An RNA of 177 nucleotides, treated with DMS and 2A3 and read out base by base. The reactions ran in a buffer of 150 mM KOAc, 10 mM MgCl2 and 150 mM bicine (pH 8.5), at 24 C. The 2A3 profile rests on 3,783 reads. DMS adducts were read by reverse transcription with MarathonRT.
RNA sequence: GGGAACGACUCGAGUAGAGUCGAAAAACAAAGACACGCUUCGCAGAUGACCUCCUCGUUGGUGCGUGUCGGUAAUGUUGUCAGUCACAGGCAACAGUUAACGAUCUGCGUAAAUAAAAACAAAAAAUACAUAACGGUGAUUCGUCACCGUUAUGUAAAAAGAAACAACAACAACAAC
Reactivity to DMS in 0.01 (KOAc 150mM, MgCl2 10mM, bicine 150mM(pH8.5), 24C), signal-to-noise 3, nucleotides 027 to 126: a050c090a080a110a070g010a000c000a010c010g020c030u010u000c000g020c010a000g010a030u010g000a050c010c010u010c100c050u000c100g010u010u000g000g010u010g010c000g020u000g030u020c000g010g000u020a080a140u000g000u000u010g000u000c010a110g000u010c270a080c300a110g020g010c000a000a030c000a040g000u010u000a010a010c020g000a010u000c020u000g010c020g020u020a020a090a070u020a030a030a030a030a040c090a010a070a130a010a030a060
Reactivity to 2A3 in 0.01 (KOAc 150mM, MgCl2 10mM, bicine 150mM(pH8.5), 24C), signal-to-noise 2, nucleotides 027 to 126: a000c050a020a030a020g010a010c000a000c000g050c010u080u110c020g000c020a010g000a010u010g000a000c000c000u050c020c030u100c100g080u070u090g020g000u010g010c010g000u010g010u000c010g000g000u080a050a050u030g000u010u010g000u000c030a060g090u150c050a050c050a190g010g000c000a010a000c000a000g030u020u040a000a010c010g010a010u000c000u000g000c010g020u010a000a070a010u130a010a060a020a000a010c050a020a100a020a000a000a000